An RNA of 207 nucleotides, treated with DMS and 2A3 and read out base by base. The RNA was probed in 150 mM KOAc, 10 mM MgCl2 and 150 mM bicine (pH 8.5) at 24 C. The DMS profile rests on 8,425 reads.
[RMDB]
RNA sequence: GGGAACGACUCGAGUAGAGUCGAAAACUGGGUGGGCUUUGAUCCUAUAUGUAGGGCAGGCAAAGUCCUUGUUCCACUCCUUCUUGCAGUGGAUCUUGCCGCUUCUCUGAAGAUGAUUGAAAUGCCCACAGCACUUGCAGAGCAAGCAGAAAAGACAACCUCCUAAAAUGUUCGCAUUUUAGGAGGUAAAAGAAACAACAACAACAAC
Reactivity to DMS in 0.01 (KOAc 150mM, MgCl2 10mM, bicine 150mM(pH8.5), 24C), signal-to-noise 3, nucleotides 027 to 156: c050u010g000g020g020u000g000g030g030c000u010u010u010g010a050u010c010c030u000a130u000a080u000g030u010a050g020g010g030c080a150g040g000c020a030a000a110g000u010c030c030u000u010g010u010u000c060c030a060c070u000c120c090u000u000c090u000u010g050c070a060g000u000g020g000a020u000c050u000u000g020c000c010g010c040u000u000c010u000c010u000g010a090a080g000a060u000g020a140u010u010g010a030a050a080u000g000c000c000c010a050c050a090g000c020a040c020u000u010g010c030a160g000a200g010c050a040a030g030c010a140g010a070a090a060a130g000a230c060a120
Reactivity to 2A3 in 0.01 (KOAc 150mM, MgCl2 10mM, bicine 150mM(pH8.5), 24C), signal-to-noise 4, nucleotides 027 to 156: c010u030g050g030g010u020g020g000g000c010u220u030u040g010a000u020c000c000u080a070u050a050u270g160u180a050g000g030g000c130a130g040g000c020a090a000a030g140u110c020c040u040u100g020u010u000c000c020a010c000u030c020c050u180u240c120u180u210g000c120a000g000u010g000g010a020u000c050u040u020g000c010c000g030c050u300u150c010u050c000u020g050a060a050g060a170u160g000a020u030u010g030a060a040a040u130g000c000c000c000a010c000a000g000c010a030c010u010u040g000c030a050g050a030g180c010a030a000g000c030a040g130a130a160a030a000g050a030c070a050